[RMDB]
RNA sequence: GGGAACGACUCGAGUAGAGUCGAAAACGCAUACGUGAGUAUGCGAACUAACAUACGUGAGUAUGUUAGACCUAGGAUCGUGAGAUCCUAGGAACAGCGGUCUUCGGACCGCUGAAGAUCUUGUCUUCGGACAAGAUCAACCUAUGAGCUUCGGCUCAUAGGAAGGCGGAACUACGGUUCCGCCAAGGAGGUCAGGGUCAGGAGCCCCCCCCUGAACCCAGGAUAACCCUCAAAGUCGGGGGGCAUACAACAUCGUGAGAUGUUGAACUGCACGCUUCGGCGUGCAGAAAAGAAACAACAACAACAAC
Reactivity to 2A3 in 0.01 (KOAc 150mM, MgCl2 10mM, bicine 150mM(pH8.5), 24C), signal-to-noise 1, nucleotides 027 to 266: c000g030c010a000u000a000c020g130u060g090a040g000u000a000u000g000c000g000a000a010c000u010a000a000c000a000u000a000c010g040u040g070a010g010u000a000u010g010u010u020a010g050a010c000c000u010a000g000g000a010u000c000g030u030g140a150g000a100u020c010c010u020a000g000g000a000a040c000a010g090c000g010g000u010c030u010u040c130g090g000a000c000c010g000c000u010g000a010a030g000a000u010c000u020u020g000u000c000u030u230c300g170g010a000c010a000a000g010a000u010c000a010a010c010c000u000a010u000g000a010g000c060u000u180c270g140g000c020u020c000a000u000a000g030g000a000a020g000g010c020g000g000a000a000c000u010a050c260g150g000u000u010c000c010g070c000c000a000a020g090g040a000g110g020u140c070a050g020g000g000u000c010a000g010g020a050g010c000c000c000c000c010c000c000c000u010g070a090a020c020c030c000a050g060g030a050u050a090a060c010c020c020u040c040a160a080a010g180u150c050g010g000g040g030g000g020c000a000u000a000c000a010a010c000a000u000c010g090u090g080a220g000a080u000g000u020u000g000a030a040

The record gives the reactivity of an RNA of 307 nucleotides to 2A3. 2A3 adducts were read by reverse transcription with SuperScript II with manganese. Conditions: 150 mM KOAc, 10 mM MgCl2 and 150 mM bicine (pH 8.5), 24 C.